[RMDB]
RNA sequence: GGGAACGACUCGAGUAGAGUCGAAAACGGUGGUAGCGAACCAGCGGUAGCCGAUAUCGGCGCCCUCGCGGUAGUGGAUGCGCAUCGGCGCUCCCACCGGCGCCCCGUAGCCGGGGAGCUCCGGGCGUCGAUCGAUAGUGUUCGCACUAUCGAUCGAAAAAGAAACAACAACAACAAC
Reactivity to 2A3 in 0.01 (KOAc 150mM, MgCl2 10mM, bicine 150mM(pH8.5), 24C), signal-to-noise 2, nucleotides 027 to 126: c030g020g040u020g030g040u020a030g040c020g060a060a070c030c010a020g040c040g100g070u060a050g030c020c010g030a100u070a090u300c010g010g000c000g010c010c000c000u030c020g030c030g000g030u070a100g020u100g110g040a100u160g000c010g000c040a250u180c070g110g000c010g010c020u000c000c000c000a070c050c000g000g000c010g040c020c000c000c030g040u090a030g060c090c000g030g000g000g010a050g010c020u040c020c000g000g000g000c000g030
Reactivity to DMS in 0.01 (KOAc 150mM, MgCl2 10mM, bicine 150mM(pH8.5), 24C), signal-to-noise 3, nucleotides 027 to 126: c000g020g020u010g030g010u000a050g020c020g000a070a110c050c040a130g000c060g000g020u030a180g020c040c020g010a220u040a030u030c010g020g000c020g000c020c010c040u010c160g020c080g010g000u030a060g020u030g000g000a070u030g020c000g010c010a120u070c170g000g020c010g010c000u000c010c000c030a100c070c000g020g010c000g010c070c030c010c060g030u000a140g000c200c020g000g000g010g000a040g020c000u010c130c110g000g000g000c020g020
The data come from the RNA Mapping Database (RMDB), library OK1LIB. Chemical mapping of a 177-nucleotide RNA with 2A3 and DMS. High 2A3 reactivity points to a flexible backbone, as in loops and unpaired stretches. The RNA was probed in 150 mM KOAc, 10 mM MgCl2 and 150 mM bicine (pH 8.5) at 24 C.